[RMDB]
RNA sequence: GGGAACGACUCGAGUAGAGUCGAAAAACCGGCUCAUCUUCGACUAGAGGCGACGGUCCUCAGUACUCUUACUCUUUUCUGUAAAGAGGAGACUGCUGGACCUGUCGCCCGAGUUCGAGAUGAGCCAAAGUUCCGAACAAGGAUCCGCGGGAGAGCAGUCUACACCGAAGUUCGCUUCGGUGUAGACAAAAGAAACAACAACAACAAC
Reactivity to 2A3 in 0.01 (KOAc 150mM, MgCl2 10mM, bicine 150mM(pH8.5), 24C), signal-to-noise 1, nucleotides 027 to 156: a000c030c000g000g000c000u000c000a020u020c040u300u190c040g010a010c020u070a070g010a220g300g000c010g010a010c010g000g000u010c000c020u000c020a020g010u220a300c020u030c040u080u160a190c000u030c030u010u130u150u200c200u240g300u300a010a000a000g000a000g050g000a000g000a000c000u000g030c070u010g030g000a000c000c010u000g000u000c010g020c000c000c000g010a000g000u030u100c030g000a000g000a000u000g000a000g000c000c000a000a000a000g000u000u040c000c000g030a070a000c040a040a070g040g010a000u040c130c070g010c060g060g080g000a090g000a000g020c060a030